Annotation
Source: RMDB library M2RFPK, as collected in RNAgym. An RNA of 207 nucleotides, treated with DMS and 2A3 and read out base by base. The reactions ran in a buffer of 150 mM KOAc, 10 mM MgCl2 and 150 mM bicine (pH 8.5), at 24 C. 2A3 is a SHAPE reagent: it acylates the 2'-hydroxyl of flexible nucleotides of all four kinds. For DMS the reverse transcriptase was MarathonRT. For 2A3, 4,430 sequencing reads were counted.
RNA sequence: GGGAACGACUCGAGUAGAGUCGAAAAGAGCAACUUAGGAUUUUAGGCUCCCCGGUGCGUCUCGAACCGCGCCGGGCCAAACCCACAGGGGCUGGCUGUCCUGUGCGGUCAAAAUCUUUCCGCUGGAAUACCUAUCCCAGUUUCGACUGGGAUAGAACAUCAUUUACUGAUUCGUCAGUAAAUGAUGAAAAGAAACAACAACAACAAC
Reactivity to DMS in 0.01 (KOAc 150mM, MgCl2 10mM, bicine 150mM(pH8.5), 24C), signal-to-noise 1, nucleotides 027 to 156: g000a040g010c020a010a030c080u000u000a040g000g000a060u000u000u020u000a160g000g000c020u000c000c020c000c020g010g040u000g000c030g050u000c070u000c220g010a180a140c200c020g000c000g020c010c010g000g000g000c080c020a050a050a100c000c010c000a070c070a060g000g020g030g000c060u010g000g050c080u000g030u010c000c000u000g000u000g010c120g060g000u000c050a020a030a050a030u000c020u000u020u010c080c050g030c050u000g020g000a120a110u000a060c110c000u010a000u000c000c000c000a010g000u000u000u000c230g000a050c000u000g010g010g000a000u000a000g000a090a150
Reactivity to 2A3 in 0.01 (KOAc 150mM, MgCl2 10mM, bicine 150mM(pH8.5), 24C), signal-to-noise 3, nucleotides 027 to 156: g000a000g010c010a010a080c070u060u050a050g070g000a030u060u030u010u040a030g020g020c010u010c010c000c000c000g000g000u000g000c000g030u020c060u120c270g080a080a040c040c000g000c000g010c000c000g000g000g000c000c000a010a000a000c000c010c000a000c010a010g000g010g030g040c030u040g080g020c060u090g050u050c000c000u010g010u010g020c150g000g000u020c010a000a010a010a050u000c000u030u100u040c050c080g100c180u160g020g050a140a070u100a200c000c000u000a000u000c000c010c000a010g000u000u030u110c180g060a020c000u000g000g000g010a000u000a000g000a000a010